[RMDB]
RNA sequence: GGGAACGACUCGAGUAGAGUCGAAAAGAGCUUGACGCAGCAACCAAAGGAAUGAUUAAGAUUCUUGAGGACGCUGGACUAAAGCCAGGAACUUUGCGCUCAGCACAGCAUGUUAUCUCGGACAUCCUCUUCGUAUCCUUUUCGAAGGAUACGAAGAAAAAGAAACAACAACAACAAC
Reactivity to DMS in 0.01 (KOAc 150mM, MgCl2 10mM, bicine 150mM(pH8.5), 24C), signal-to-noise 5, nucleotides 027 to 126: g000a110g010c010u010u010g010a100c240g040c010a030g000c010a120a300c020c000a010a250a030g000g000a020a010u000g000a140u010u010a130a110g000a030u000u000c000u000u010g000a300g000g030a030c300g010c000u000g010g020a080c110u010a030a040a090g010c020c030a090g000g000a070a060c070u000u000u000g010c090g000c040u010c050a060g010c070a080c100a070g000c060a060u000g010u000u000a060u010c030u010c050g000g010a060c110a050u010c080c070
Reactivity to 2A3 in 0.01 (KOAc 150mM, MgCl2 10mM, bicine 150mM(pH8.5), 24C), signal-to-noise 2, nucleotides 027 to 126: g030a010g000c030u060u060g010a030c060g000c090a000g050c000a010a020c000c000a000a010a020g040g030a020a010u040g140a290u210u210a160a090g050a140u000u020c000u020u030g010a000g000g010a000c030g000c020u000g000g030a040c050u150a110a010a000g010c000c000a030g060g030a060a040c050u080u100u100g010c070g000c010u040c070a020g040c040a020c030a030g040c030a000u040g020u090u100a110u060c050u020c050g020g030a020c020a060u040c000c020
Source: RMDB library OK2TRN, as collected in RNAgym. Chemical mapping of a 177-nucleotide RNA with DMS and 2A3. The RNA was probed in 150 mM KOAc, 10 mM MgCl2 and 150 mM bicine (pH 8.5) at 24 C. For DMS, 2,938 sequencing reads were counted. Values are in units of 0.01, from 0 to 300, in steps of 10. Values cover nucleotides 27 to 126.